[RMDB]
RNA sequence: GGGAACGACUCGAGUAGAGUCGAAAACUUGCUCAUCCCCUUCUGAAAGGGGGUGAUAAAAAUGACAGCAUAUGAAACAAUCUCUUUAAUGAUUGCUUUUGGCAUGCUGAUUGCCAUGUUGUCAGAGCGGUCUCCUCUCGUUCGCGAGAGGAGACCGAAAAGAAACAACAACAACAAC
Reactivity to 2A3 in 0.01 (KOAc 150mM, MgCl2 10mM, bicine 150mM(pH8.5), 24C), signal-to-noise 1, nucleotides 027 to 126: c000u000u160g000c000u000c000a000u000c010c000c080c000u070u070c050u150g160a160a000a050g000g000g000g000g000u010g000a000u060a000a100a000a010a060u000g060a000c000a000g000c010a000u000a000u210g080a000a000a000c000a000a000u000c050u000c000u030u300u300a140a040u160g010a000u000u040g100c160u000u000u060u040g000g020c010a020u000g160c170u210g090a260u070u000g000c000c000a000u000g000u000u000g080u070c040a000g000a000g050
Structure probing data (2A3) for a 177-nucleotide construct.
Conditions: 150 mM KOAc, 10 mM MgCl2 and 150 mM bicine (pH 8.5), 24 C.